RNA sequence: GGGAACGACUCGAGUAGAGUCGAAAAACGAGUCGUACGCGACUCGAAUGGUAUUGUCGCCGUAAAAGAACAAGACGUCACCGGACGCGACCGGGCUAAAAAGCGAAACGUCAUCUACGGAUGACGAAAAACGGACCUGGGUUCGCCCAGGUCCGAACCAUACUCUCUGCUUCGGCAGAGAGUAUGGAAAAGAAACAACAACAACAAC
Reactivity to 2A3 in 0.01 (KOAc 150mM, MgCl2 10mM, bicine 150mM(pH8.5), 24C), signal-to-noise 2, nucleotides 027 to 156: a000c010g010a000g000u000c000g010u040a030c250g000c010g100a000c000u000c000g010a010a120u090g010g020u080a070u090u150g040u050c020g000c010c000g110u130a040a030a050a230g020a080a030c050a060a010g090a020c050g060u100c030a010c020c020g000g020a020c000g000c000g010a000c000c010g000g020g060c040u070a010a020a000a000a010g030c020g020a070a020a000c000g000u000c000a000u000c000u020a020c200g070g000a010u000g010a000c000g010a090a020a010a000a000c000g000g000a000c000c000u000g010g000g010u040u050c180g050c050c000c000a000g000g000u000c000c000g000a000a000